[RMDB]
RNA sequence: GGGAACGACUCGAGUAGAGUCGAAAAGAGAAGUAAACUGUUAGCCGCCAGCGGCUUGACCCGCUGUGGCCGCGGCGGCCUAGUUGAGACUGAAACGGCGGGUGAGAGCUCGGAGAGACCGAGCAGAGAUCAUAGGAGCGUUCGCGCUCCUAUGAUCAAAAGAAACAACAACAACAAC
Reactivity to 2A3 in 0.01 (KOAc 150mM, MgCl2 10mM, bicine 150mM(pH8.5), 24C), signal-to-noise 3, nucleotides 027 to 126: g100a000g030a110a030g070u240a080a070a110c100u100g040u200u170a040g000c000c000g000c000c020a050g000c010g000g000c000u000u040g060a140c000c000c000g010c000u020g000u020g010g010c000c000g020c000g000g000c010g000g000c000c000u030a020g000u020u100g010a030g030a100c050u120g010a050a000a010c000g020g000c000g000g020g010u000g020a050g000a000g010c000u000c000g030g020a210g010a020g050a250c010c000g010a000g000c000a000g010a000
Reactivity to DMS in 0.01 (KOAc 150mM, MgCl2 10mM, bicine 150mM(pH8.5), 24C), signal-to-noise 2, nucleotides 027 to 126: g000a060g000a100a080g000u060a070a110a090c060u010g030u010u100a210g000c010c000g030c020c000a050g030c010g000g000c020u010u020g020a120c030c000c000g040c000u000g020u010g020g000c000c010g000c000g000g070c060g080g000c030c010u010a000g030u040u040g010a160g000a190c030u010g000a010a030a020c000g000g050c040g020g010g010u000g000a150g000a050g040c010u000c000g030g000a300g000a180g030a220c000c020g000a040g010c000a020g010a060
Source: RMDB library OK1LIB, as collected in RNAgym. The record gives the reactivity of an RNA of 177 nucleotides to 2A3 and DMS. For DMS, 2,007 sequencing reads were counted. 2A3 is a SHAPE reagent: it acylates the 2'-hydroxyl of flexible nucleotides of all four kinds. 2A3 adducts were read by reverse transcription with SuperScript II with manganese. The RNA was probed in 150 mM KOAc, 10 mM MgCl2 and 150 mM bicine (pH 8.5) at 24 C. DMS adducts were read by reverse transcription with MarathonRT.